Structure probing data (DMS and 2A3) for a 207-nucleotide construct.
Conditions: 150 mM KOAc, 10 mM MgCl2 and 150 mM bicine (pH 8.5), 24 C.
RNA sequence: GGGAACGACUCGAGUAGAGUCGAAAAGCCGAUGAAUUGCCGAGAAGCCUGGCUCGAAAUCGUCGACGCAUCGACGACGGUCCUGCCAUGAGACCUUAACGAGGACAUGUCGCCUCGAAUGGCGUCGUAUAACAUGAGUGGUUCGCCACUCAUGUAAACCAACAUAACGUUUCGACGUUAUGUUGGUAAAAGAAACAACAACAACAAC
Reactivity to DMS in 0.01 (KOAc 150mM, MgCl2 10mM, bicine 150mM(pH8.5), 24C), signal-to-noise 2, nucleotides 027 to 156: g000c020c010g010a110u000g000a100a120u000u000g020c040c040g010a110g000a100a130g010c030c040u010g010g020c000u000c010g010a050a090a060u000c040g010u000c000g020a060c090g030c120a160u000c000g010a000c040g010a030c040g050g010u000c000c010u000g040c030c040a070u000g000a110g020a060c030c030u000u000a080a120c060g010a090g000g020a090c040a050u000g010u000c020g000c010c000u000c040g000a060a090u000g020g010c020g020u000c010g020u000a110u020a070a070c010a020u000g010a030g030u000g020g010u000u010c300g010c040c000a000c010u000c010a000u010g010u000a030a120
Reactivity to 2A3 in 0.01 (KOAc 150mM, MgCl2 10mM, bicine 150mM(pH8.5), 24C), signal-to-noise 5, nucleotides 027 to 156: g040c010c000g030a030u070g020a050a200u110u120g050c060c010g030a030g040a080a020g070c050c070u090g050g020c030u020c040g050a070a040a030u070c030g050u030c000g010a020c040g000c050a060u030c030g030a020c010g000a000c020g010g020u010c010c010u050g090c040c010a110u140g040a040g040a170c010c030u110u090a060a020c070g010a010g000g010a020c030a070u170g030u060c030g020c040c030u020c020g050a100a080u070g060g020c000g000u010c010g010u050a090u020a130a010c000a000u000g000a000g010u010g020g030u050u060c140g050c070c000a000c000u000c000a000u010g000u000a010a000